[RMDB]
RNA sequence: GGGAACGACUCGAGUAGAGUCGAAAAAACAAAGCUAACAACCCUAUAGGAGAAGGCUUUAUAGAAGUAAGAAGUCCAAAAGAUUUAAGGUUAAAAGAUUACGAUAAUGUUUAUGCUGUAGGAGAUGACGAUACAUAUCUUUCGAGAUAUGUAUCGUAAAAGAAACAACAACAACAAC
Reactivity to DMS in 0.01 (KOAc 150mM, MgCl2 10mM, bicine 150mM(pH8.5), 24C), signal-to-noise 5, nucleotides 027 to 126: a100a070c110a060a050a070g010c070u010a060a150c060a100a150c060c000c020u000a060u010a060g000g010a100g010a100a140g000g000c020u000u000u000a060u020a080g000a090a080g010u010a030a070g020a080a090g010u000c010c020a050a070a080a190g000a110u010u000u000a080a110g020g000u000u000a050a080a100a090g010a110u000u000a020c060g010a060u000a030a040u000g000u000u000u010a100u040g010c020u010g000u000a020g000g010a130g000a070u010g000
Reactivity to 2A3 in 0.01 (KOAc 150mM, MgCl2 10mM, bicine 150mM(pH8.5), 24C), signal-to-noise 3, nucleotides 027 to 126: a000a000c070a030a040a000g110c030u110a100a010c020a010a040c020c000c000u030a040u060a070g080g030a050g000a080a010g040g010c000u000u040u020a070u040a040g090a090a000g010u080a040a040g040a080a000g060u010c020c010a060a160a050a000g060a030u120u150u140a080a040g080g020u030u070a070a140a000a100g040a090u060u070a010c020g010a000u020a090a010u060g020u040u300u030a050u110g080c020u020g020u050a030g040g040a060g010a040u140g060